[RMDB]
The record gives the reactivity of an RNA of 177 nucleotides to 2A3 and DMS. The RNA was probed in 150 mM KOAc, 10 mM MgCl2 and 150 mM bicine (pH 8.5) at 24 C. For 2A3, 4,391 sequencing reads were counted. For DMS, 2,959 sequencing reads were counted.
RNA sequence: GGGAACGACUCGAGUAGAGUCGAAAAAGAAAGAGCGUAGCACACACUCAGACUAAGUCUGACACACACCUACGCUAAACAUCUUAGUGUGUGAUGGAGAUAUCGAUGUGUGUGUAAGAUGAAAAAAUCACUUGUCAUAGUUCGCUAUGACAAGUGAAAAAGAAACAACAACAACAAC
Reactivity to 2A3 in 0.01 (KOAc 150mM, MgCl2 10mM, bicine 150mM(pH8.5), 24C), signal-to-noise 2, nucleotides 027 to 126: a000g180a040a050a000g070a000g010c010g010u020a000g000c000a000c000a000c000a000c020u030c050a030g010a040c060u130a140a120g060u000c000u020g040a000c010a000c000a000c000a000c000c000u000a010c000g010c010u010a040a020a010c020a000u000c000u010u000a000g000u000g000u000g010u000g010a030u060g050g050a080g030a110u210a050u140c030g020a030u080g010u000g000u010g000u000g000u010a000a000g020a000u020g020a000a000a030a000a000a060
Reactivity to DMS in 0.01 (KOAc 150mM, MgCl2 10mM, bicine 150mM(pH8.5), 24C), signal-to-noise 3, nucleotides 027 to 126: a100g000a090a080a090g010a210g020c010g020u000a050g000c010a010c000a010c000a010c010u000c050a080g010a060c170u010a100a120g010u000c000u000g010a120c000a000c000a000c000a000c020c020u000a020c020g020c030u000a010a060a140c010a020u000c020u000u000a020g000u000g010u000g000u000g010a080u000g020g000a010g000a090u010a130u010c020g000a030u010g020u000g010u000g020u000g000u000a010a010g010a010u010g000a010a020a060a080a120a060